[RMDB]
RNA sequence: GGGAACGACUCGAGUAGAGUCGAAAAGAUAUGGAACGUGUAGGACAUGGACCAUCGGAAACGAUGGCCCAACAGCCUACCGUUCCUAAGUCAAAGGAUGGUAACUGGUUCGCCAGUUACCAUCCAACCAACGAUAUGUCUUCGGACAUAUCGUUGGAAAAGAAACAACAACAACAAC
Reactivity to DMS in 0.01 (KOAc 150mM, MgCl2 10mM, bicine 150mM(pH8.5), 24C), signal-to-noise 3, nucleotides 027 to 126: g010a030u000a240u010g000g000a000a000c000g000u010g020u010a010g010g010a080c160a200u000g020g000a020c000c000a000u000c000g000g000a060a060a110c000g000a020u000g010g010c020c000c000a030a070c280a160g000c000c000u010a010c000c000g000u000u010c010c000u010a010a030g000u000c010a100a110a120g000g010a010u000g010g020u000a000a020c000u000g000g000u000u020c300g010c010c010a010g010u000u010a000c000c010a000u000c000c010a010a040
Reactivity to 2A3 in 0.01 (KOAc 150mM, MgCl2 10mM, bicine 150mM(pH8.5), 24C), signal-to-noise 4, nucleotides 027 to 126: g010a010u030a010u070g010g000a000a000c010g130u160g010u300a010g020g060a130c100a290u040g000g010a010c000c000a000u000c010g010g000a020a010a010c000g000a000u000g010g000c000c010c000a050a060c080a020g040c000c000u000a000c010c000g000u000u000c000c000u000a000a010g010u010c040a110a060a110g010g000a000u000g000g000u000a000a000c000u000g010g080u090u220c300g050c070c000a000g000u010u000a000c000c000a000u000c000c000a000a000